[RMDB]
An RNA of 207 nucleotides, treated with DMS and 2A3 and read out base by base.
RNA sequence: GGGAACGACUCGAGUAGAGUCGAAAAAUGUUGACCCCGUCUUAUACCUGAGUCAAAGACAAUAGGAACUUUGUGAUCAACUGCUUCAGCGACUUCUUGUAAGGAAUCAAAAGCAGCUGGACCACCAUCUAAUUGACGGCCACCAUGAUUGGUUACAGUUUUAGGCUAAUUUCGAUUAGCCUAAAACAAAAGAAACAACAACAACAAC
Reactivity to DMS in 0.01 (KOAc 150mM, MgCl2 10mM, bicine 150mM(pH8.5), 24C), signal-to-noise 1, nucleotides 027 to 156: a030u000g010u000u000g010a160c030c000c020c070g010u010c030u020u000a150u000a130c090c060u000g030a280g020u010c010a100a060a140g010a060c030a120a140u020a230g000g020a100a120c030u020u000u000g010u010g020a030u000c000a040a020c030u000g010c010u000u010c080a140g010c070g020a090c000u000u000c010u020u000g020u010a140a090g030g010a080a080u020c020a120a070a030a080g030c020a010g010c040u010g080g020a020c010c030a010c040c040a160u030c070u000a020a170u000u020g000a090c000g020g000c010c010a030c030c060a080u010g020a130u010u010g000g010u000u010a130c070a110
Reactivity to 2A3 in 0.01 (KOAc 150mM, MgCl2 10mM, bicine 150mM(pH8.5), 24C), signal-to-noise 3, nucleotides 027 to 156: a000u100g020u090u020g060a090c000c000c000c000g000u020c050u100u200a210u110a150c000c030u030g060a060g050u050c080a140a140a100g030a100c060a040a060u120a140g040g040a100a100c030u080u110u170g040u050g000a050u040c020a000a050c010u010g010c010u060u060c060a070g050c020g070a070c040u040u050c000u030u150g120u190a120a080g040g040a020a000u060c020a020a100a100a010g010c010a020g000c020u050g050g040a050c090c000a020c000c030a030u050c050u090a160a060u030u070g020a010c010g020g000c000c000a000c000c010a030u120g020a160u170u100g060g000u020u050a030c010a030